This 207-nucleotide RNA was probed chemically with DMS and 2A3. It was measured as part of the RMDB library PDB130. Values cover nucleotides 27 to 156. For DMS the reverse transcriptase was MarathonRT. For 2A3 the reverse transcriptase was SuperScript II with manganese.
[RMDB]
RNA sequence: GGGAACGACUCGAGUAGAGUCGAAAACCCCGGCCGCUUUGGUGACUCUAGAUAACCUCGGGCCGAUCGCACGCCCCCGUGACGGCGACGAUACAUUCGGAUGUCUGCCCUAUCAACUUUCGAUGGUACUUUCUGCGCCUACCAUGGUGACCACGGGCACCAUGCGCUACUUCGGUAGCGCAUGGUGAAAAGAAACAACAACAACAAC
Reactivity to DMS in 0.01 (KOAc 150mM, MgCl2 10mM, bicine 150mM(pH8.5), 24C), signal-to-noise 2, nucleotides 027 to 156: c040c000c010c040g020g000c010c020g020c080u010u000u000g020g020u000g000a060c040u020c060u000a070g010a160u000a090a080c080c010u000c050g020g020g040c000c010g000a070u020c010g020c000a110c000g000c010c050c010c030c150g040u000g010a110c090g020g030c000g000a080c020g020a070u000a040c130a140u000u000c050g020g000a120u010g010u010c020u010g010c050c040c070u000a140u010c030a050a060c030u000u000u000c010g000a050u010g010g010u000a130c040u000u000u000c010u000g010c060g030c040c050u020a100c030c040a090u010g030g050u000g020a130c020c020a030c060g010g010g030
Reactivity to 2A3 in 0.01 (KOAc 150mM, MgCl2 10mM, bicine 150mM(pH8.5), 24C), signal-to-noise 2, nucleotides 027 to 156: c020c000c000c000g010g010c010c010g080c160u180u070u060g030g000u060g040a080c020u000c090u190a060g080a230u100a100a040c010c010u020c040g010g030g040c030c000g020a060u090c020g010c030a240c080g030c010c000c000c000c000g000u000g010a080c020g010g010c020g010a030c000g020a050u040a090c040a060u080u130c050g050g030a050u070g040u060c090u070g080c030c060c000u070a120u140c020a040a070c030u020u100u060c020g030a030u080g040g010u070a050c020u030u120u040c030u080g040c010g020c000c010u030a110c000c040a050u160g010g000u020g020a020c030c000a000c000g000g010g010